About this RNA:
The record gives the reactivity of an RNA of 207 nucleotides to 2A3. It was measured as part of the RMDB library OK3TST. Reactivities are given for positions 27 through 156.

[RMDB]
RNA sequence: GGGAACGACUCGAGUAGAGUCGAAAAGCAAAUUUGAGAAAAAGAUAACUUCAGAAGCAUUGAAAGAUGUGUUGAGUGAUACAGGUUGGGAAGUUUCUGAACAAACCGAAUACGAUGGCUUACGUACUACGUCAUGGACUUCUUAUCAAACUAGAUAGACUGCCUAGUAGUUCGCUACUAGGCAGUCAAAAGAAACAACAACAACAAC
Reactivity to 2A3 in 0.01 (KOAc 150mM, MgCl2 10mM, bicine 150mM(pH8.5), 24C), signal-to-noise 1, nucleotides 027 to 156: g040c010a000a030a040u210u100u070g040a100g000a100a080a010a070a070g030a050u090a060a090c030u060u010c030a010g010a050a000g000c030a120u060u190g110a160a080a040g050a100u110g020u000g010u050u100g110a110g000u020g010a000u000a120c040a030g000g040u000u010g000g050g000a020a020g000u000u010u050c000u000g000a040a000c000a050a080a040c050c010g050a070a020u090a090c090g080a100u030g000g000c060u150u060a010c050g010u000a080c030u020a000c050g100u000c000a060u030g010g010a020c000u000u000c000u020u000a000u120c040a000a000a100c100u110a080g110a040u220a190

The RNA was probed in 150 mM KOAc, 10 mM MgCl2 and 150 mM bicine (pH 8.5) at 24 C.